[RMDB]
RNA sequence: GGGAACGACUCGAGUAGAGUCGAAAAAUUUUUUUGCAGGCAGUUGGAUGGCAACCAUCAGGGGCCAGAUUAACACGAAAUGAGGAGGAUUCCGGAAGUUAACGCACAAAAGGAGGAUCAGGGCGCAAUAAUGUAGUUACUUCGGUAACUACAUUAUAAAAGAAACAACAACAACAAC
Reactivity to DMS in 0.01 (KOAc 150mM, MgCl2 10mM, bicine 150mM(pH8.5), 24C), signal-to-noise 9, nucleotides 027 to 126: a020u010u000u010u010u010u000u010g010c080a060g010g000c060a050g010u000u000g000g010a070u010g010g010c060a070a080c060c050a110u020c110a090g000g010g010g000c020c030a040g000a120u010u010a050a050c070a090c090g000a040a060a080u020g010a100g000g000a060g010g010a130u010u010c030c020g010g000a050a060g000u000u000a050a070c100g000c080a060c110a030a050a090a080g010g000a060g000g000a060u000c070a070g010g000g000c060g000c100a080
Reactivity to 2A3 in 0.01 (KOAc 150mM, MgCl2 10mM, bicine 150mM(pH8.5), 24C), signal-to-noise 6, nucleotides 027 to 126: a000u080u030u020u030u020u030u080g050c050a030g030g000c010a030g020u110u070g120g010a060u040g020g040c040a040a070c020c020a060u110c070a030g000g000g040g000c020c000a010g020a060u080u110a090a030c050a000c050g080a050a060a100u160g010a060g030g030a010g010g040a020u110u000c010c010g010g020a040a000g010u030u080a060a030c060g030c060a020c020a040a090a020a020g080g010a030g010g000a010u030c030a010g030g000g010c040g010c020a000
Structure probing data (DMS and 2A3) for a 177-nucleotide construct. Values cover nucleotides 27 to 126.